Structure probing data (2A3) for a 177-nucleotide construct. Source: RMDB library OK1LIB, as collected in RNAgym. Reactivities are given for positions 27 through 126. 2A3 adducts were read by reverse transcription with SuperScript II with manganese. For 2A3, 762 sequencing reads were counted.
[RMDB]
RNA sequence: GGGAACGACUCGAGUAGAGUCGAAAAGUGGUGGUCAGCAGGAUGACCACCAUCAGCGGCAUCUUCGCGAACAGGCCGUGGAUUGAAUCCAGCUCCAGGGCGGGAGUUCCACCGACCAAGACCGUGACUCUGGACGUUUGUUCGCAAACGUCCAGAGAAAAGAAACAACAACAACAAC
Reactivity to 2A3 in 0.01 (KOAc 150mM, MgCl2 10mM, bicine 150mM(pH8.5), 24C), signal-to-noise 1, nucleotides 027 to 126: g000u000g000g000u000g000g040u030c030a010g020c140a190g060g210a170u060g000a000c030c000a020c000c000a000u000c010a000g010c010g000g010c000a000u030c020u120u110c080g010c150g010a130a050c030a070g050g070c060c020g040u060g000g020a070u040u130g030a020a000u070c000c010a030g000c000u000c060c000a020g000g000g030c030g060g000g000a070g000u010u040c000c000a020c000c000g010a030c050c000a000a090g070a020c050c010g070u070g060a000